[RMDB]
RNA sequence: GGGAACGACUCGAGUAGAGUCGAAAAGAAAAGACGAUGUUAUUAUGAUUCUCGAGUAAUAGCAGGUCAUGCGUACUACUCGCCGAACGGAAGGCAGACUGUUCGCGCAAUGAAACGAGCAAGAAAAGGUAAUACCACUCUUCGGAGUGGUAUUACCAAAAGAAACAACAACAACAAC
Reactivity to DMS in 0.01 (KOAc 150mM, MgCl2 10mM, bicine 150mM(pH8.5), 24C), signal-to-noise 2, nucleotides 027 to 126: g010a180a030a030a200g000a040c030g010a140u010g090u000u000a080u000u020a010u040g040a140u000u000c100u030c040g030a080g000u000a010a020u000a020g000c000a060g000g000u010c010a080u000g000c010g030u000a120c130u020a060c050u000c030g000c300c050g000a000a050c040g000g050a140a150g000g020c190a110g000a040c030u000g000u000u030c030g020c060g020c050a070a100u000g000a060a090a120c120g000a010g000c110a010a080g000a060a000a080a050
Reactivity to 2A3 in 0.01 (KOAc 150mM, MgCl2 10mM, bicine 150mM(pH8.5), 24C), signal-to-noise 3, nucleotides 027 to 126: g050a000a110a000a000g000a010c120g200a250u020g010u010u020a010u040u010a010u020g040a080u280u040c060u050c050g060a020g010u020a030a000u010a000g010c010a030g060g000u020c000a050u070g020c020g040u060a030c000u000a020c000u070c090g010c040c020g020a120a070c000g000g120a110a000g120g020c010a000g060a140c060u020g040u060u030c020g020c030g000c120a090a090u210g100a070a030a040c060g020a050g010c030a120a000g060a200a070a030a000
Structure probing data (DMS and 2A3) for a 177-nucleotide construct. For 2A3, 2,007 sequencing reads were counted. The reactions ran in a buffer of 150 mM KOAc, 10 mM MgCl2 and 150 mM bicine (pH 8.5), at 24 C. Values cover nucleotides 27 to 126. DMS adducts were read by reverse transcription with MarathonRT.